[RMDB]
RNA sequence: GGGAACGACUCGAGUAGAGUCGAAAAGUAGUCUGAGUUUUAACUCUGGGAGAUUUUCAAGAUUGAUAGUGUAGCUAAAAAUAACUGACCUAAUUUUCUGGAGGUCAAGAUAAAAACUGGAUUUGUGAUCGGAGUAGAUGUUCGCAUCUACUCCGAUAAAAGAAACAACAACAACAAC
Reactivity to DMS in 0.01 (KOAc 150mM, MgCl2 10mM, bicine 150mM(pH8.5), 24C), signal-to-noise 1, nucleotides 027 to 126: g010u010a110g010u010c000u000g000a060g010u000u000u000u000a060a150c040u000c040u010g010g000g000a060g010a060u000u000u000u000c050a070a060g010a060u000u000g020a200u020a030g030u000g000u010a050g000c020u000a000a060a160a120a070u000a090a090c050u000g000a070c300c040u020a030a040u000u000u000u000c030u010g000g000a020g000g000u000c170a030a060g000a060u020a040a010a010a050a040c040u000g000g000a010u000u020u010g030u000g000
Record summary:
An RNA of 177 nucleotides, treated with DMS and read out base by base. DMS adducts were read by reverse transcription with MarathonRT. Source: RMDB library OK2TST, as collected in RNAgym. Values cover nucleotides 27 to 126.